[RMDB]
RNA sequence: GGGAACGACUCGAGUAGAGUCGAAAAGCGGCGGUGUCGCUGUUCGAGAACUACUUCACGCGGCAAAAGGCGGCCGUGCUGUCGGCGAUCGGUGCCGGCGGUGAGUGGUGGGACUCGAAACGGUGGAACGAGGAGCUCGCGGCGGACCUGUUCGCGCACUAUAAAGGGGUUUCGACCCCUUUAUAGUAAAAGAAACAACAACAACAAC
Reactivity to DMS in 0.01 (KOAc 150mM, MgCl2 10mM, bicine 150mM(pH8.5), 24C), signal-to-noise 2, nucleotides 027 to 156: g050c030g000g060c000g010g030u000g020u010c010g000c020u000g030u000u070c010g040a070g020a080a300c010u000a040c010u010u010c030a100c000g000c030g040g000c020a100a060a090a130g020g040c050g010g040c030c000g020u010g040c010u010g040u010c030g020g010c020g010a220u010c150g030g020u000g010c000c020g000g000c030g000g040u000g010a100g040u000g030g020u000g010g000g010a290c010u000c010g010a040a070a040c010g020g000u010g010g000a110a210c000g000a090g020g010a200g010c040u000c050g080c050g030g010c010g030g000a100c060c030u030g010u000u000c010g010c030g000c150
Reactivity to 2A3 in 0.01 (KOAc 150mM, MgCl2 10mM, bicine 150mM(pH8.5), 24C), signal-to-noise 3, nucleotides 027 to 156: g000c010g040g000c010g050g050u090g100u150c010g000c010u010g020u040u060c010g010a010g010a010a030c020u090a040c010u090u080c080a030c080g120c020g040g000c050a060a060a110a160g220g030c100g070g000c000c010g000u040g020c040u010g020u030c000g000g010c010g090a200u200c110g160g160u250g010c000c010g000g000c000g000g010u050g020a060g010u060g000g000u060g010g080g020a010c000u010c020g010a090a060a040c020g020g030u060g030g030a050a060c030g010a090g070g040a030g070c030u030c060g000c020g070g000c020g010g020a040c000c010u060g030u080u120c030g000c000g000c050